Background:
An RNA of 177 nucleotides, treated with 2A3 and DMS and read out base by base. The data come from the RNA Mapping Database (RMDB), library M2PK50. The reactions ran in a buffer of 150 mM KOAc, 10 mM MgCl2 and 150 mM bicine (pH 8.5), at 24 C. For 2A3 the reverse transcriptase was SuperScript II with manganese. As a SHAPE reagent, 2A3 marks flexible, mostly unpaired nucleotides at the ribose 2'-OH. For DMS, 1,230 sequencing reads were counted.

[RMDB]
RNA sequence: GGGAACGACUCGAGUAGAGUCGAAAAGCGACUACCUUCGGGUAGUCGCAAAUAAAUUCAGCGGUAAUUCGAGGCGAAAUAUUACCGCAGAUCGCCUCGAAAAAAGCCUAGACUUCGGUCUAGGCAAUCUAGAAAACUACUUCGGUAGUUUUCUAGAAAAAGAAACAACAACAACAAC
Reactivity to 2A3 in 0.01 (KOAc 150mM, MgCl2 10mM, bicine 150mM(pH8.5), 24C), signal-to-noise 1, nucleotides 027 to 126: g000c020g000a000c000u030a000c020c020u060u050c230g020g000g010u000a010g000u020c010g000c000a010a000a000u020a000a000a000u090u050c020a040g000c010g030g100u120a110a180u040u010c010g000a000g000g030c010g010a120a060a000u220a060u090u150a070c010c040g000c010a020g070a000u010c000g000c000c000u000c000g020a000a060a000a000a000a000g030c010c000u020a000g000a010c010u030u060c300g060g010u000c040u000a010g000g000c000a000a000
Reactivity to DMS in 0.01 (KOAc 150mM, MgCl2 10mM, bicine 150mM(pH8.5), 24C), signal-to-noise 2, nucleotides 027 to 126: g010c000g020a050c000u010a010c010c010u000u030c200g050g000g000u010a000g010u000c010g010c000a000a020a080u000a070a090a040u020u000c070a090g010c030g000g000u020a110a150u000u000c020g010a010g020g030c010g020a020a120a090u000a110u000u000a150c050c030g000c040a040g000a180u000c040g020c020c020u000c010g000a000a050a050a090a090a090g000c010c000u000a010g000a000c000u000u010c220g040g010u000c000u000a010g000g010c010a010a000